Description
An RNA of 207 nucleotides, treated with 2A3 and read out base by base.
[RMDB]
RNA sequence: GGGAACGACUCGAGUAGAGUCGAAAAACCUUUGUGGAAAUGGGAGCACCAUGCAUGUGAGGUCUUACCCAUUGGGUAAGACUCCCCACCACAUGUGGUGCGAAGAACAUUUCCACUCUGGUAAAGUCGCCUUUAUCGUUCGCGAUAAAGGCGACAACGCAAUCUAUGAGUUCGCUCAUAGAUUGCGAAAAGAAACAACAACAACAAC
Reactivity to 2A3 in 0.01 (KOAc 150mM, MgCl2 10mM, bicine 150mM(pH8.5), 24C), signal-to-noise 1, nucleotides 027 to 156: a020c010c000u030u000u000g000u000g020g000a000a000a010u000g030g000g020a020g040c000a010c020c030a070u300g000c030a030u010g020u000g010a020g010g000u010c000u010u020a000c000c020c120a300u070u300g000g000g000u010a000a000g000a000c000u010c010c000c000c020a040c010c000a000c020a010u010g050u050g000g040u000g010c030g050a040a050g000a000a010c000a000u000u000u010c000c000a000c000u000c000u000g000g000u060a110a080a050g000u020c020g000c000c000u030u000u000a020u000c040g040u090u040c300g010c030g150a000u000a000a010a010g000g000c000g000a000c000a010a000

For 2A3, 1,742 sequencing reads were counted. It was measured as part of the RMDB library RNAMAK.